The record gives the reactivity of an RNA of 177 nucleotides to DMS and 2A3. The reactions ran in a buffer of 150 mM KOAc, 10 mM MgCl2 and 150 mM bicine (pH 8.5), at 24 C.
[RMDB]
RNA sequence: GGGAACGACUCGAGUAGAGUCGAAAACUUGGUUGAAAAGCCAGUGGCGCGAAGCUACCGUGUGCCGGAUUAUGACUGAACGCCUCUAAGUCAGAAUCCAAGCUAGCAACCGGCGCCUGUGCCCGCCAUUGAGGUUCCUAUUCGUAGGAACCUCAAUAAAAGAAACAACAACAACAAC
Reactivity to DMS in 0.01 (KOAc 150mM, MgCl2 10mM, bicine 150mM(pH8.5), 24C), signal-to-noise 4, nucleotides 027 to 126: c050u030u000g000g010u000u010g010a100a050a090a080g010c000c020a010g000u040g000g020c020g000c050g010a110a210g010c040u000a050c130c050g030u020g010u020g000c100c190g000g000a020u000u010a040u000g000a030c020u000g000a170a090c120g020c030c020u000c040u000a240a020g010u000c000a030g010a040a010u000c000c000a120a180g010c110u010a060g000c030a110a130c070c090g000g010c300g020c010c020u010g000u000g010c000c020c020g020c210c120
Reactivity to 2A3 in 0.01 (KOAc 150mM, MgCl2 10mM, bicine 150mM(pH8.5), 24C), signal-to-noise 4, nucleotides 027 to 126: c020u040u040g020g010u010u030g100a030a030a030a000g010c000c010a050g010u050g020g010c030g010c030g090a090a030g000c030u050a050c060c100g090u100g040u070g170c060c080g000g020a020u030u030a030u050g010a010c000u010g020a140a030c070g060c020c000u030c020u020a030a000g010u000c000a010g020a000a000u000c000c000a020a010g020c030u080a030g020c010a060a060c050c030g050g000c000g020c000c000u030g020u050g040c000c000c000g040c040c000
Reactivities are given for positions 27 through 126.
Source: RMDB libraries RFM100 and RFMREP, as collected in RNAgym.